[RMDB]
RNA sequence: GGGAACGACUCGAGUAGAGUCGAAAAUUACCUCCCUUCGGGGAGGUAAACUGAACGCUGCAAGCGGCAGCGCGCUCGCUUGCGCACACACGCACAAUUAAAGCAGUAUGCACUUCGGUGCAUACAAGCUGUGUAUUCCAUUCGUGGAAUACACAGCAAAAGAAACAACAACAACAAC
Reactivity to 2A3 in 0.01 (KOAc 150mM, MgCl2 10mM, bicine 150mM(pH8.5), 24C), signal-to-noise 3, nucleotides 027 to 126: u020u000a000c000c000u010c010c010c000u010u060c200g050g020g000g010a000g000g000u000a000a000a010c000u030g080a100a010c090g000c090u180g000c020a010a010g010c000g030g000c000a070g220c050g020c060g000c120u150c040g030c010u010u030g000c010g010c000a000c010a010c010a030c030g080c020a050c020a110a200u220u190a300a090a010g040c040a020g000u010a000u000g020c000a000c030u040u060c210g070g000u010g000c010a000u010a000c000a000a010
Reactivity to DMS in 0.01 (KOAc 150mM, MgCl2 10mM, bicine 150mM(pH8.5), 24C), signal-to-noise 2, nucleotides 027 to 126: u020u000a000c000c000u010c000c000c000u000u010c140g010g020g010g000a020g000g020u000a000a010a060c070u040g020a100a110c250g020c060u030g060c020a020a030g030c010g080g000c040a130g030c230g000c170g000c010u000c090g010c030u000u000g010c000g010c040a070c170a060c070a060c080g000c100a060c200a030a070u040u000a030a130a110g000c100a190g000u000a000u000g000c010a010c000u000u000c160g040g000u010g010c030a000u000a000c010a060a100
This 177-nucleotide RNA was probed chemically with 2A3 and DMS. For 2A3, 4,129 sequencing reads were counted. Values cover nucleotides 27 to 126. For DMS the reverse transcriptase was MarathonRT.